[RMDB]
RNA sequence: GGGAACGACUCGAGUAGAGUCGAAAAGAUAUGGAUCUCGUAGGGAGAUCCCAUUCGGAAACGAAUGGAAGAUCAUCGAUCUACAGAGAUCCUAAGUCAAACGCAGGGUGAGUUCGCUCACCCUGCGGGAUUGUGAUAAGUUCGCUUAUCACAAUCCAAAAGAAACAACAACAACAAC
Reactivity to DMS in 0.01 (KOAc 150mM, MgCl2 10mM, bicine 150mM(pH8.5), 24C), signal-to-noise 4, nucleotides 027 to 126: g000a020u010a020u010g000g000a020u000c000u000c010g010u000a020g000g000g010a010g010a010u000c000c000c000a010u000u000c010g020g000a020a010a030c010g010a010a000u000g000g010a130a130g010a010u000c000a300u000c250g000a020u010c000u000a000c000a150g000a010g010a010u000c000c010u000a000a070g000u000c010a110a110a300c030g010c000a000g000g000g010u000g000a000g020u010u010c300g010c010u000c010a000c000c000c000u000g000c010g010
Reactivity to 2A3 in 0.01 (KOAc 150mM, MgCl2 10mM, bicine 150mM(pH8.5), 24C), signal-to-noise 5, nucleotides 027 to 126: g000a000u000a000u060g010g000a000u000c010u010c020g020u010a000g000g020g010a030g000a010u000c000c020c000a000u000u000c000g000g010a010a000a000c010g010a010a000u010g030g060a180a210g010a010u010c010a010u300c020g000a000u000c000u040a040c170a100g020a000g000a000u030c000c000u010a000a000g000u010c020a130a030a070c020g000c000a010g010g050g000u020g010a010g020u100u240c300g100c220u010c000a000c000c000c000u000g000c000g000
Chemical mapping of a 177-nucleotide RNA with DMS and 2A3. For DMS, 7,232 sequencing reads were counted.